[RMDB]
RNA sequence: GGGAACGACUCGAGUAGAGUCGAAAAGCGGAGUCUCUUCGUCUCGGACCGGCUCAUCUCGACAAGAGGCGGCAGUCCUCAGUGCUCUUACUCUUUUCUGUAAAGAGGAGACUGCUGGACUCGCCGCCCAAGUUCGAGCAUGAGCCAAGUGCCGAGCGUUACAAUGGCCGUUCGCGGCCAUUGUAACAAAAGAAACAACAACAACAAC
Reactivity to 2A3 in 0.01 (KOAc 150mM, MgCl2 10mM, bicine 150mM(pH8.5), 24C), signal-to-noise 1, nucleotides 027 to 156: g100c040g170g040a070g060u020c080u040c020u190u190c050g120u020c020u010c010g000g020a050c050c030g020g060c000u000c010a000u020c000u000c010g000a000c020a070a140g010a140g080g010c000g010g030c010a000g000u070c020c010u010c030a070g010u130g210c040u000c000u070u300a300c000u040c020u060u100u060u060c260u300g280u300a000a020a020g000a000g020g000a000g000a000c000u030g020c050u020g010g010a020c000u050c110g000c000c000g000c000c000c000a000a000g090u120u000c000g000a000g000c050a040u000g000a000g000c000c000a000a010g070u100g060c020c000g000a000g010c000

This 207-nucleotide RNA was probed chemically with 2A3. 2A3 is a SHAPE reagent: it acylates the 2'-hydroxyl of flexible nucleotides of all four kinds. The 2A3 profile rests on 665 reads.